Annotation: Structure probing data (DMS and 2A3) for a 207-nucleotide construct. 2A3 adducts were read by reverse transcription with SuperScript II with manganese. For DMS the reverse transcriptase was MarathonRT.
RNA sequence: GGGAACGACUCGAGUAGAGUCGAAAAGCCGAUGAAUUGCCGAGAAGCCUGGCUCGAAAUCGUCGACGCAUCGACGACGGUCCUGCCAUGAGACCGUAACGAGGACAUGUCGCCUCGAGUGGCGUCGUAUAACAUGAGUGGUUCGCCACUCAUGUAACCCUUUCUGAGAGUUCGCUCUCAGAAAGGGAAAAGAAACAACAACAACAAC
Reactivity to DMS in 0.01 (KOAc 150mM, MgCl2 10mM, bicine 150mM(pH8.5), 24C), signal-to-noise 1, nucleotides 027 to 156: g020c020c030g000a070u000g030a080a120u010u000g000c020c000g050a220g060a140a180g030c010c090u020g040g000c060u000c040g010a050a060a020u000c000g010u000c000g010a030c140g000c080a140u000c010g020a020c000g000a060c000g010g010u000c020c000u000g040c040c130a080u000g020a140g020a070c000c010g000u010a020a040c050g000a030g030g010a100c100a060u020g040u020c060g020c000c020u000c010g000a120g020u000g020g020c020g000u000c010g040u000a080u010a070a070c000a020u000g010a050g060u000g000g010u000u010c300g020c000c010a030c000u010c000a000u000g020u010a000a150
Reactivity to 2A3 in 0.01 (KOAc 150mM, MgCl2 10mM, bicine 150mM(pH8.5), 24C), signal-to-noise 3, nucleotides 027 to 156: g060c040c010g020a040u090g080a020a220u200u120g060c060c060g030a040g060a140a010g020c020c060u080g040g020c010u020c060g060a080a080a070u050c010g020u030c000g020a050c080g040c160a150u080c010g010a000c000g010a010c000g000g010u000c010c010u070g070c000c020a060u020g040a010g010a090c000c020g020u070a010a020c020g000a010g010g000a060c050a180u230g030u140c060g000c010c000u010c010g010a010g020u030g020g020c010g020u050c030g010u030a090u040a290a010c000a000u000g000a000g000u000g000g030u030u060c090g040c050c000a000c000u000c000a000u000g000u000a000a000
It was measured as part of the RMDB library M2RFPK.
The reactions ran in a buffer of 150 mM KOAc, 10 mM MgCl2 and 150 mM bicine (pH 8.5), at 24 C.